This 207-nucleotide RNA was probed chemically with 2A3 and DMS. Reactivities are rounded to 0.1 and cut off at 0 and 3. The reactions ran in a buffer of 150 mM KOAc, 10 mM MgCl2 and 150 mM bicine (pH 8.5), at 24 C. For DMS the reverse transcriptase was MarathonRT.
RNA sequence: GGGAACGACUCGAGUAGAGUCGAAAAGUUUACUGGAUCCUCAUAACCAUCCUAUGGCAAAUAGCAGAAAAAGCAGCAGGAUCUAUCUCUUCUCGUAAAUGAAGAAAGUGAGGCUCGUAGGUCUGGUGACUUGCCUACGAGUAGAACCAGGCCUCAAGUAUGAACUAAGGUUCGCCUUAGUUCAUACAAAAGAAACAACAACAACAAC
Reactivity to 2A3 in 0.01 (KOAc 150mM, MgCl2 10mM, bicine 150mM(pH8.5), 24C), signal-to-noise 2, nucleotides 027 to 156: g010u010u050u050a070c030u020g010g010a040u030c000c020u010c040a030u070a130a070c050c010a040u050c000c040u100a130u170g120g000c040a060a040a210u070a110g090c080a010g200a120a090a040a040a010g040c030a010g030c060a030g010g010a020u000c030u040a070u050c040u000c000u040u000c030u030c060g180u150a080a090a120u170g020a010a020g010a040a030a010g000u000g010a010g030g000c000u000c050g010u010a000g000g010u000c020u030g020g020u100g070a090c020u050u090g000c010c000u010a020c020g000a010g000u000a020g000a020a000c010c000a020g020g020c010c000u040c030a000a040
Reactivity to DMS in 0.01 (KOAc 150mM, MgCl2 10mM, bicine 150mM(pH8.5), 24C), signal-to-noise 1, nucleotides 027 to 156: g000u010u000u000a080c040u000g020g030a060u010c030c030u000c070a040u000a100a130c050c010a110u010c040c030u010a110u010g000g060c060a060a160a120u000a180g030c060a130g000a050a090a070a110a140g020c050a090g020c040a050g000g010a070u010c010u010a100u020c070u000c010u000u000c000u020c150g020u000a040a030a120u010g000a050a060g000a010a130a190g000u000g000a170g010g000c050u010c040g040u010a010g010g000u000c030u050g030g000u040g020a070c090u010u000g010c000c000u010a050c020g020a010g050u000a030g000a190a100c010c010a030g030g010c010c000u000c040a030a300
It was measured as part of the RMDB library OK3TST.
The 2A3 profile rests on 1,116 reads.